[RMDB]
RNA sequence: GGGAACGACUCGAGUAGAGUCGAAAAAACGUUGCAUGAUCGUAAAACAUGCCCGGCUUACCGUGAGCCGCCUUUGAAAGAAAGGUUUACACGGACUCUGUUCCGUUACGCACGUACCUAACUUGUGAAAACGGCAUCUUGUUCGCAAGAUGCCGAACCCUGGGCAAUUGUUCGCAAUUGCCCAGGGAAAAGAAACAACAACAACAAC
Reactivity to 2A3 in 0.01 (KOAc 150mM, MgCl2 10mM, bicine 150mM(pH8.5), 24C), signal-to-noise 1, nucleotides 027 to 156: a000a000c000g000u000u000g000c000a000u000g030a050u180c010g080u200a060a040a040a040c000a000u020g000c000c000c000g000g000c000u020u050a080c000c020g010u010g000a010g000c000c000g010c000c000u060u010u010g040a030a020a000g000a000a000a040g050g000u000u120u030a000c010a000c000g090g000a040c080u130c080u130g090u120u010c000c000g000u030u040a010c050g080c000a050c060g080u110a070c020c020u050a060a110c020u090u010g100u060g100a070a070a000a000c000g000g000c000a000u000c000u030u000g000u020u010c030g000c070a000a000g010a010u000g000c000c000g000a000a000